Structure probing data (2A3 and DMS) for a 177-nucleotide construct. The DMS profile rests on 68,963 reads. The 2A3 profile rests on 76,060 reads. 2A3 adducts were read by reverse transcription with SuperScript II with manganese.
[RMDB]
RNA sequence: GGGAACGACUCGAGUAGAGUCGAAAAUGCAGACGAAGUCGUGACUCCUCUAACAGUAGGCCAAGAGGAGGCUGGUCCUGCCGCCGUGCAGUCCUCCCUCGACCUGGGAGUGGAGGACCCCAGGUCCCCACGACCAUAAGUUCGCUUAUGGUCGUGGAAAAGAAACAACAACAACAAC
Reactivity to 2A3 in 0.01 (KOAc 150mM, MgCl2 10mM, bicine 150mM(pH8.5), 24C), signal-to-noise 9, nucleotides 027 to 126: u090g010c010a010g020a060c030g080a160a020g050u080c030g060u030g050a060c010u000c010c000u000c010u030a080a060c030a170g220u200a070g130g040c040c020a070a010g010a010g040g000a010g010g000c030u060g010g030u050c010c010u030g060c020c010g060c020c020g040u090g010c010a010g020u030c010c010u020c010c010c000u050c040g030a060c010c010u030g020g020g010a070g020u100g010g070a060g010g050a010c000c000c000c000a010g010g010u010c030c010
Reactivity to DMS in 0.01 (KOAc 150mM, MgCl2 10mM, bicine 150mM(pH8.5), 24C), signal-to-noise 9, nucleotides 027 to 126: u000g010c040a060g010a080c040g010a120a070g010u000c040g020u000g000a120c020u000c010c010u000c010u000a120a150c100a160g010u010a070g020g020c040c070a090a050g000a040g000g010a040g000g010c060u000g010g010u010c070c020u000g010c090c030g010c040c060g010u010g010c050a050g000u000c020c010u000c010c000c010u000c070g000a050c040c030u000g000g010g000a070g010u000g010g010a050g010g000a130c060c010c010c010a050g010g000u000c020c230